This 177-nucleotide RNA was probed chemically with DMS and 2A3. The 2A3 profile rests on 2,566 reads. The RNA was probed in 150 mM KOAc, 10 mM MgCl2 and 150 mM bicine (pH 8.5) at 24 C.

[RMDB]
RNA sequence: GGGAACGACUCGAGUAGAGUCGAAAAGGUCGGCAAUCGGUUGACCGACGUCGCGCAUGCCAUCGAAACGGGUACCCGUGCCGCCGAGCUCCGUUAUGGACGCUCGUUCGGGAUCGUCGCCGGUUACCAAACGGUCUACGUUCGCGUAGACCGUUUGAAAAGAAACAACAACAACAAC
Reactivity to DMS in 0.01 (KOAc 150mM, MgCl2 10mM, bicine 150mM(pH8.5), 24C), signal-to-noise 5, nucleotides 027 to 126: g010g010u000c010g020g020c020a100a080u000c090g000g020u000u010g000a120c020c020g000a060c040g010u000c060g000c120g020c130a130u000g010c030c040a040u000c100g000a070a100a090c160g000g000g000u000a120c050c100c030g020u000g010c030c040g010c300c020g000a020g010c000u000c000c000g010u000u020a120u020g000g010a030c160g020c020u010c010g010u000u010c020g000g000g000a050u000c050g010u000c070g010c000c000g010g010u000u000a090c130
Reactivity to 2A3 in 0.01 (KOAc 150mM, MgCl2 10mM, bicine 150mM(pH8.5), 24C), signal-to-noise 3, nucleotides 027 to 126: g050g020u050c020g000g020c030a040a140u110c090g150g050u080u090g100a140c030c020g020a010c020g040u070c050g020c010g000c020a020u130g020c000c010a050u070c080g140a020a060a080c060g030g000g050u080a080c010c010c030g010u050g010c040c010g020c010c010g000a000g000c000u000c010c010g090u210u210a150u300g020g020a000c060g000c020u010c010g020u070u060c020g010g000g010a090u050c010g030u010c020g020c010c000g020g000u030u060a030c000